[RMDB]
RNA sequence: GGGAACGACUCGAGUAGAGUCGAAAACGCACCGAGGGUGCUGACAGGUUACGCUCGCUGCCUUUCCAGUAGUUCACGAAAGGCCUCCUGCGGUAGCGGUUUGCUGAACAGGUAGCCCUGAUAGAGGCUAUCCCAGUCGUUUCGACGACUGGGAUAGAAAAGAAACAACAACAACAAC
Reactivity to 2A3 in 0.01 (KOAc 150mM, MgCl2 10mM, bicine 150mM(pH8.5), 24C), signal-to-noise 1, nucleotides 027 to 126: c040g000c010a000c010c050g020a100g120g090g020u060g050c030u110g030a080c070a160g130g000u130u230a060c050g020c110u010c000g000c000u030g000c000c030u010u040u030c010c030a040g040u070a010g000u140u180c080a040c160g020a000a020a080g010g030c010c000u070c020c030u020g000c040g060g010u030a010g000c010g050g120u030u070u200g000c000u030g010a050a010c010a030g030g000u040a010g000c000c010c020u010g030a030u120a190g140a080g090g000
Reactivity to DMS in 0.01 (KOAc 150mM, MgCl2 10mM, bicine 150mM(pH8.5), 24C), signal-to-noise 3, nucleotides 027 to 126: c180g020c040a060c050c020g020a080g010g000g030u000g010c050u000g010a120c260a100g020g000u000u000a060c040g020c000u000c030g010c110u000g000c010c080u000u000u000c020c060a150g010u010a070g000u020u010c110a070c060g020a100a110a070g000g000c030c070u000c010c010u010g010c070g010g010u010a030g020c020g020g000u000u010u000g010c040u010g000a150a060c060a050g000g010u010a120g010c010c000c020u000g000a150u000a080g000a080g010g000
Overview
Chemical mapping of a 177-nucleotide RNA with 2A3 and DMS. DMS adducts were read by reverse transcription with MarathonRT. The reactions ran in a buffer of 150 mM KOAc, 10 mM MgCl2 and 150 mM bicine (pH 8.5), at 24 C. 2A3 adducts were read by reverse transcription with SuperScript II with manganese.